[RMDB]
RNA sequence: GGGAACGACUCGAGUAGAGUCGAAAAGGGCUCCCCGCGCUCUAGGGCAGGCGGAGAGGGAAGCGGCCGAACAGCUCGAGGCUGGGGGCUCGCGGGCGCGGCCGCGUGCCGCGGGGAGGGAGGCUGGUACUAUUAUGACUUUCGAGUCAUAAUAGUAAAAAGAAACAACAACAACAAC
Reactivity to 2A3 in 0.01 (KOAc 150mM, MgCl2 10mM, bicine 150mM(pH8.5), 24C), signal-to-noise 9, nucleotides 027 to 126: g040g010g020c010u010c000c000c000c000g000c000g010c010u080c070u170a140g060g030g030c050a030g030g060c060g030g040a120g040a110g090g040g000a070a030g010c010g010g000c000c000g030a110a050c020a030g020c010u070c110g070a070g100g040c030u050g040g020g020g080g010c070u100c060g040c010g000g010g020c050g000c010g000g010c000c010g070c040g050u080g020c020c000g000c000g000g000g000g010a050g000g010g000a030g020g030c060u070g020g040
Reactivity to DMS in 0.01 (KOAc 150mM, MgCl2 10mM, bicine 150mM(pH8.5), 24C), signal-to-noise 8, nucleotides 027 to 126: g000g000g010c010u000c010c010c000c010g010c040g020c070u020c070u030a140g010g000g020c040a100g010g010c080g000g000a170g000a120g000g010g000a180a170g010c010g010g010c000c000g000a130a170c070a070g000c000u010c140g010a160g010g000c020u000g000g010g010g010g000c020u010c050g020c020g000g000g000c040g010c030g000g010c000c010g010c090g010u000g010c070c000g020c020g000g000g000g000a070g000g000g000a080g000g000c070u010g010g000